An RNA of 207 nucleotides, treated with 2A3 and read out base by base. The RNA was probed in 150 mM KOAc, 10 mM MgCl2 and 150 mM bicine (pH 8.5) at 24 C. It was measured as part of the RMDB library M2RFPK.
[RMDB]
RNA sequence: GGGAACGACUCGAGUAGAGUCGAAAACGUGUCCGUCGGCGUAGCCGAAAACAUGCCCAGGUAGCCCAGACCUUCAAGGCUACGGUGCGUUGCGACGCACGGUCUGAUUCUUCACAACGACGUUCACAAGAUCGGAUCACUUUCGAGUGAUCCGAAACGGACUAAACCAAUUCGUUGGUUUAGUCCGAAAAGAAACAACAACAACAAC
Reactivity to 2A3 in 0.01 (KOAc 150mM, MgCl2 10mM, bicine 150mM(pH8.5), 24C), signal-to-noise 3, nucleotides 027 to 156: c050g000u020g030u030c070c100g050u040c040g020g000c150g160u150a070g040c010c000g010a010a000a000a000c020a030u090g060c020c000c010a010g020g000u010a010g010c000c040c070a020g010a000c000c000u000u060c030a020a000g000g040c000u000a000c020g020g000u000g010c000g000u010u050g080c230g100a010c000g000c000a000c010g000g000u030c000u010g010a010u060u030c070u060u140c140a120c020a230a110c120g090a050c080g110u080u070c090a040c030a200a110g050a160u030c000g000g020a000u000c000a000c010u040u070u060c120g070a000g000u000g000a000u000c000c000g010a000a010a000